The record gives the reactivity of an RNA of 177 nucleotides to 2A3 and DMS. For DMS the reverse transcriptase was MarathonRT.
RNA sequence: GGGAACGACUCGAGUAGAGUCGAAAAGAUAUGGACGAGGCAACAGCAUUAUGUCGGAAACGACAUCAAUGACAUGCCUUGUCCUAAGUCAAAGUGUAGUAUCCCAGUUCGCUGGGAUACUACACAAUCCUAGUCCUCCGUUCGCGGAGGACUAGGAAAAAGAAACAACAACAACAAC
Reactivity to 2A3 in 0.01 (KOAc 150mM, MgCl2 10mM, bicine 150mM(pH8.5), 24C), signal-to-noise 1, nucleotides 027 to 126: g050a000u090a020u090g000g000a020c020g020a000g010g000c010a080a010c040a300g110c010a030u010u010a010u020g000u020c020g010g000a040a070a030c000g010a020c000a000u020c140a000a030u020g080a120c030a030u040g010c000c000u000u000g010u000c000c000u000a050a020g070u010c050a100a110a080g000u020g010u010a010g000u000a000u000c000c010c020a020g020u050u060c230g030c120u000g000g000g000a010u000a020c000u060a000c000a020c000a000a000
Reactivity to DMS in 0.01 (KOAc 150mM, MgCl2 10mM, bicine 150mM(pH8.5), 24C), signal-to-noise 1, nucleotides 027 to 126: g020a090u000a300u020g000g000a020c000g050a020g010g040c000a030a040c140a080g000c040a000u000u000a000u020g000u000c000g000g000a060a050a140c020g000a000c000a000u000c210a010a000u000g020a090c060a250u000g000c000c010u000u000g000u000c000c000u000a000a050g000u000c010a080a100a160g010u000g010u020a000g000u000a000u000c000c000c000a030g000u000u000c270g010c010u020g000g000g010a000u000a000c000u000a000c010a000c000a030a020
Notes:
High DMS reactivity at an A or C suggests that its Watson-Crick edge is free. For 2A3 the reverse transcriptase was SuperScript II with manganese. It was measured as part of the RMDB library TTRDEL. The RNA was probed in 150 mM KOAc, 10 mM MgCl2 and 150 mM bicine (pH 8.5) at 24 C.